RNA sequence: GGGAACGACUCGAGUAGAGUCGAAAAGUUUUUAACGCGUGUGCACCCGCUAACACGAAUUACCCAGUUAUUUUCGACUUUACUCGAGUCGUUAUAGCGUGAGUUGGCGGAGUUCUCCCCGAAAUAAAUGAGUGAAAUUAUUCGUAAUUUCACUCAUAAAAGAAACAACAACAACAAC
Reactivity to DMS in 0.01 (KOAc 150mM, MgCl2 10mM, bicine 150mM(pH8.5), 24C), signal-to-noise 3, nucleotides 027 to 126: g000u000u000u010u010u010a030a050c170g000c030g030u000g020u000g020c070a120c110c040c070g000c050u000a060a030c020a020c020g000a090a100u000u000a120c070c060c040a110g000u000u000a070u000u000u000u000c000g000a020c000u000u000u000a000c010u000c010g010a000g000u000c000g000u000u000a010u000a070g020c060g020u000g010a070g010u000u000g010g000c030g010g010a120g010u000u000c060u000c010c000c010c040g010a060a060a070u010a050a070